[RMDB]
RNA sequence: GGGAACGACUCGAGUAGAGUCGAAAAAGAGCCGGAUACGUCCGGCUCAACGGGGGAUACGUGUGGUGCCGUCCGCUCCCCCUAUGGCAUGACAAAUGCACCACACACUAGGCUACGGCCUAGUGAAAAAAGGUGUAUGUGUUCGCACAUACACCAAUCUGAGCACAUAGUUCGCUAUGUGCUCAGAAAAAGAAACAACAACAACAAC
Reactivity to 2A3 in 0.01 (KOAc 150mM, MgCl2 10mM, bicine 150mM(pH8.5), 24C), signal-to-noise 1, nucleotides 027 to 156: a000g000a000g000c000c000g060g000a020u050a040c170g080u020c000c010g020g000c000u000c000a000a000c000g000g010g000g000g000a030u050a120c010g010u000g000u010g030g040u000g000c060c050g030u010c070c030g110c050u020c000c010c000c020c000u080a190u100g140g020c070a080u130g020a100c080a010a070a030u120g000c010a000c000c000a000c010a000c010a000c000u000a010g000g000c000u010a030c220g070g000c000c000u000a000g000u000g000a080a010a010a030a000a040g020g000u000g000u000a000u020g030u000g020u020u040c190g020c080a010c000a000u000a000c000a000c000c000a000a000